[RMDB]
RNA sequence: GGGAACGACUCGAGUAGAGUCGAAAAUCAUCAAGAAGUAGGCUUAGGCCAAUUGCUUGGGGGUGAAAGUAGAGGGAAGGUAGCACUUCGACGCCUCUAAGUACGCUGUGGGAGUAGUGCUUAAAUCAAAAGCACAGCGACUUCGGUCGCUGUGCAACCCAUUUACGUUCUUCGGAACGUAAAUGGGAAAAGAAACAACAACAACAAC
Reactivity to 2A3 in 0.01 (KOAc 150mM, MgCl2 10mM, bicine 150mM(pH8.5), 24C), signal-to-noise 2, nucleotides 027 to 156: u050c030a010u040c040a040a040g020a100a030g080u150a030g040g000c030u150u120a050g010g070c080c040a080a100u060u090g010c060u010u020g000g040g000g000g000u020g060a190a010a020g080u110a040g030a030g090g030g000a070a000g040g000u090a040g000c000a010c050u030u000c020g010a010c030g020c000c000u040c010u030a020a010g000u010a030c040g000c040u070g000u100g060g000g020a090g020u070a000g010u020g000c020u080u120a040a140a050u140c050a070a070a020a010g010c000a000c000a000g000c000g000a000c010u030u020c040g070g000u000c000g010c010u010g000u000g020c000a000a000
Background
Source: RMDB library M2RFPK, as collected in RNAgym. The record gives the reactivity of an RNA of 207 nucleotides to 2A3. The RNA was probed in 150 mM KOAc, 10 mM MgCl2 and 150 mM bicine (pH 8.5) at 24 C. 2A3 adducts were read by reverse transcription with SuperScript II with manganese.